[RMDB]
RNA sequence: GGGAACGACUCGAGUAGAGUCGAAAAGAGAGCUUCGGCUCUCAAAAAGAUAUGGAUUCUCCGUAUAGUCACUCGGAAACGAGUGAACUAAGGAGAUCCUAAGUCAAAAAACCUGGUUCGCCAGGAAGAUACUUGUUAAGUUCGCUUAACAAGUAUCAAAAGAAACAACAACAACAAC
Reactivity to DMS in 0.01 (KOAc 150mM, MgCl2 10mM, bicine 150mM(pH8.5), 24C), signal-to-noise 5, nucleotides 027 to 126: g000a020g010a010g020c020u000u010c220g060g010c000u010c000u000c000a030a060a100a170a070g000a020u000a300u010g000g000a030u000u010c000u000c000c010g000u010a090u000a030g010u010c010a010c000u000c000g010g000a110a090a190c010g010a000g000u000g010a020a010c000u020a030a300g000g000a010g000a010u000c000c000u000a020a110g010u020c010a010a050a120a080a110a130c010c000u000g000g000u000u020c200g010c010c000a010g000g010a070a030
Reactivity to 2A3 in 0.01 (KOAc 150mM, MgCl2 10mM, bicine 150mM(pH8.5), 24C), signal-to-noise 5, nucleotides 027 to 126: g010a000g000a000g000c030u080u090c300g200g000c010u020c010u000c000a010a000a000a010a010g030a020u060a010u070g030g030a070u300u050c000u010c000c010g080u300a130u070a300g010u000c000a000c010u000c010g020g030a070a060a050c010g010a000g000u010g000a010a010c000u000a020a110g000g000a010g000a000u000c000c000u000a080a030g030u010c070a000a030a030a020a100a190c020c000u020g010g080u050u060c240g050c050c000a000g020g010a010a020